[RMDB]
RNA sequence: GGGAACGACUCGAGUAGAGUCGAAAAGUGUGUGGAUGCGCGUGAACCGAUCUGGUAGUAGCCAAGCGAUGGGGUGACGCAGGAAGGUAGCUGAGCCAGUCAGUGGUAAUACUGGUGUAAGCGUGUAUAAAGUGCACAUUUUCGAAUGUGCACUUUAAAAAGAAACAACAACAACAAC
Reactivity to 2A3 in 0.01 (KOAc 150mM, MgCl2 10mM, bicine 150mM(pH8.5), 24C), signal-to-noise 3, nucleotides 027 to 126: g060u030g000u000g010u030g060g040a070u060g020c010g010c010g060u060g010a030a050c010c060g040a050u030c010u070g060g000u020a170g020u040a070g060c020c030a040a020g050c050g100a060u070g020g030g020g010u010g030a020c030g040c020a030g070g060a050a010g050g000u070a030g000c020u020g010a010g010c020c000a020g010u020c020a050g050u060g070g010u090a120a020u050a160c000u010g030g000u000g000u010a010a010g030c000g060u030g050u040a020
Reactivity to DMS in 0.01 (KOAc 150mM, MgCl2 10mM, bicine 150mM(pH8.5), 24C), signal-to-noise 7, nucleotides 027 to 126: g020u010g020u000g030u000g010g010a070u020g010c030g010c060g000u000g000a140a100c050c050g000a100u010c050u000g010g020u000a060g020u010a110g000c050c050a100a120g010c090g010a090u000g000g000g000g010u010g000a110c080g020c040a090g000g010a080a060g000g010u020a100g010c030u000g010a290g000c010c010a040g000u000c170a100g000u010g000g010u020a090a080u020a040c020u000g000g000u000g000u030a160a070g010c030g000u020g020u010a130